[RMDB]
RNA sequence: GGGAACGACUCGAGUAGAGUCGAAAACUGCCUCCUCAGUCGGGGGCGAUACUCCUGCUGAAAAUGGUACUGUAUCUGGCAUUCUCGGAAGUUUUGCUUCUGCUUUCACUUCCGCUGCACUACUAGCAAGUGAUGCGUAAUUCGUUACGCAUCACUUAAAAGAAACAACAACAACAAC
Reactivity to 2A3 in 0.01 (KOAc 150mM, MgCl2 10mM, bicine 150mM(pH8.5), 24C), signal-to-noise 2, nucleotides 027 to 126: c010u030g030c000c000u030c020c020u080c060a100g120u100c090g010g000g000g010g020c000g000a000u040a030c010u040c000c000u010g000c040u060g080a040a070a070a100u170g020g010u010a070c070u070g050u060a100u090c060u040g040g000c030a050u250u000c070u030c020g000g020a030a000g000u030u050u080u070g010c000u160u120c070u150g050c010u020u060u040c070a020c000u010u000c000c000g030c020u030g000c030a020c050u090a030c000u050a020g050c030
Reactivity to DMS in 0.01 (KOAc 150mM, MgCl2 10mM, bicine 150mM(pH8.5), 24C), signal-to-noise 3, nucleotides 027 to 126: c130u010g000c000c000u000c040c170u000c090a150g020u020c230g000g030g000g000g010c050g000a050u010a110c090u000c020c010u010g010c030u010g000a050a040a110a080u000g000g010u010a070c060u000g000u000a040u000c040u000g020g000c050a120u010u010c050u000c050g010g010a020a030g010u000u000u000u000g000c020u000u000c170u000g020c030u000u000u000c170a050c020u020u000c010c010g020c220u010g010c070a060c100u010a090c100u010a060g000c230